[RMDB]
RNA sequence: GGGAACGACUCGAGUAGAGUCGAAAACGACGUAGUUUCGACUACGUCGACAGGGAAACGAGCCAAGUGGCGCCGACCACUUAAAAACACCGGAUAAUAAAAGAGCCCGUACUUUCGAGUACGGGAACUAGUGAAAAGCAUUCGUGCUUUUCACUAGAAAAGAAACAACAACAACAAC
Reactivity to 2A3 in 0.01 (KOAc 150mM, MgCl2 10mM, bicine 150mM(pH8.5), 24C), signal-to-noise 2, nucleotides 027 to 126: c010g000a000c000g000u010a000g020u000u000u140c220g050a030c020u010a000c000g000u000c010g000a050c020a020g030g060g050a060a120a110c070g010a040g060c030c020a030a010g000u000g020g000c020g000c020c000g250a300c020c000a010c030u200u230a000a010a000a000a030c060a000c010c000g030g020a040u090a160a080u060a030a140a020a040g070a040g140c000c000c000g000u000a000c010u020u070u080c220g030a010g030u000a000c010g000g000g010a000a000
Reactivity to DMS in 0.01 (KOAc 150mM, MgCl2 10mM, bicine 150mM(pH8.5), 24C), signal-to-noise 2, nucleotides 027 to 126: c030g020a020c000g020u020a000g000u000u000u030c110g020a050c020u000a000c010g010u000c000g010a060c130a080g000g000g000a060a070a080c090g020a100g000c060c070a070a000g010u020g010g010c020g000c030c010g000a150c000c000a010c000u010u000a020a000a010a020a010c130a010c000c000g010g000a090u010a110a110u000a070a070a140a240g000a210g010c000c020c000g000u000a000c000u000u000u030c230g010a010g010u000a010c000g000g010g020a000a020
Background
The record gives the reactivity of an RNA of 177 nucleotides to 2A3 and DMS. The DMS profile rests on 1,618 reads. For 2A3 the reverse transcriptase was SuperScript II with manganese.